Source: RMDB library OK3TST, as collected in RNAgym. Chemical mapping of a 207-nucleotide RNA with 2A3. 2A3 adducts were read by reverse transcription with SuperScript II with manganese. Reactivities are given for positions 27 through 156. The RNA was probed in 150 mM KOAc, 10 mM MgCl2 and 150 mM bicine (pH 8.5) at 24 C.
RNA sequence: GGGAACGACUCGAGUAGAGUCGAAAAAGGAAGAUAGCUAGACAUCUAAUUAAAGUAACUUAAAACGGCACUUCAUCAUCGUCUUCAGCGGCAUUGUUUCCAUCCUCAGAAGUCACCUUAUUCAAAAUUACUAAUGUAGAAUUAAAGCCUUGCAGUACCUAAAGUUUCGGUUCGCCGAAACUUUAGGAAAAGAAACAACAACAACAAC
Reactivity to 2A3 in 0.01 (KOAc 150mM, MgCl2 10mM, bicine 150mM(pH8.5), 24C), signal-to-noise 1, nucleotides 027 to 156: a020g140g020a080a050g140a020u100a000g030c050u040a010g050a100c000a040u000c010u040a250a120u150u130a130a130a070g000u010a110a130c070u070u100a050a060a010a040c010g010g000c010a070c080u040u000c060a080u020c000a060u010c050g080u000c020u170u040c050a010g040c040g030g000c020a050u040u040g010u030u020u000c040c000a010u010c000c000u010c000a020g060a080a000g030u040c040a020c050c000u080u010a080u110u020c040a090a110a110a200u120u080a080c010u170a100a050u100g060u050a080g020a070a000u120u080a050a110a070g020c020c040u020u090g080c030a010g070u070a060